[RMDB]
RNA sequence: GGGAACGACUCGAGUAGAGUCGAAAAACUAGUAUGUACACGAUGAGACUGCCGUGUCGUCUAGACUGCGGAUCCAAUGAUCUCAGAUCUGCGAGAUAUUGUCUCAAGAGUACGAGACAAGUACUCAGUCUUAUGACUACUUCGGUGGUCGUAAGACAAAAGAAACAACAACAACAAC
Reactivity to DMS in 0.01 (KOAc 150mM, MgCl2 10mM, bicine 150mM(pH8.5), 24C), signal-to-noise 9, nucleotides 027 to 126: a070c020u000a030g020u020a040u020g010u020a020c030a060c050g010a190u020g000a070g010a050c040u000g000c040c020g010u000g000u000c010g000u010c060u030a020g000a140c050u010g000c150g010g000a020u000c010c240a100a130u040g000a040u010c040u010c050a070g010a050u000c000u000g000c060g010a040g000a050u010a050u000u010g000u000c000u000c010a050a010g000a070g020u010a020c030g000a100g010a050c130a060a060g000u000a060c010u000c020a160
Reactivity to 2A3 in 0.01 (KOAc 150mM, MgCl2 10mM, bicine 150mM(pH8.5), 24C), signal-to-noise 9, nucleotides 027 to 126: a000c010u020a010g080u080a040u100g070u050a010c030a010c030g060a060u100g010a010g040a040c040u050g060c050c000g000u010g020u010c000g000u000c020u020a020g010a060c020u030g010c040g030g000a000u000c010c050a130a100u230g020a030u020c040u010c030a010g010a150u000c000u010g010c020g020a020g010a030u100a040u040u060g000u000c000u000c010a020a010g050a020g050u050a020c040g010a010g040a060c060a060a040g020u010a020c000u010c020a010
This 177-nucleotide RNA was probed chemically with DMS and 2A3. For DMS the reverse transcriptase was MarathonRT. Reactivities are given for positions 27 through 126. For DMS, 67,572 sequencing reads were counted.